[RMDB]
RNA sequence: GGGAACGACUCGAGUAGAGUCGAAAAGGUCGACGUGCAACAUAACGUCGUUGAGACGCUGAUUGGCUGCUACUACUUCCUCGUCAAGUUUUCCAAAAAGCUUAUCGACGUACGCCUGUUCGUCUUCCUUAAUAGUGUCAUUCGUGACACUAUUAAGAAAAGAAACAACAACAACAAC
Reactivity to 2A3 in 0.01 (KOAc 150mM, MgCl2 10mM, bicine 150mM(pH8.5), 24C), signal-to-noise 9, nucleotides 027 to 126: g050g020u050c020g010a010c010g010u040g030c050a120a050c020a210u200a160a020c020g000u000c000g000u010u040g030a030g000a020c030g000c070u020g020a080u040u020g030g010c050u070g040c030u080a050c010u020a030c010u140u070c020c070u100c050g040u030c020a020a040g020u050u060u140u020c020c000a030a060a010a020a010g010c030u120u110a040u080c020g010a010c020g020u160a010c020g030c010c040u030g010u030u030c020g010u010c030u030u030c000
Reactivity to DMS in 0.01 (KOAc 150mM, MgCl2 10mM, bicine 150mM(pH8.5), 24C), signal-to-noise 9, nucleotides 027 to 126: g010g020u000c050g010a020c020g030u000g010c060a050a080c170a110u010a120a140c010g000u000c010g010u000u000g000a070g000a140c300g000c020u000g000a300u000u000g000g010c300u000g000c100u000a070c080u000a050c050u000u000c050c080u000c130g010u000c150a060a060g010u000u000u000u000c040c060a010a030a050a120a030g000c010u000u010a210u000c020g000a010c010g000u010a020c050g020c070c070u000g010u000u000c030g010u000c010u000u000c030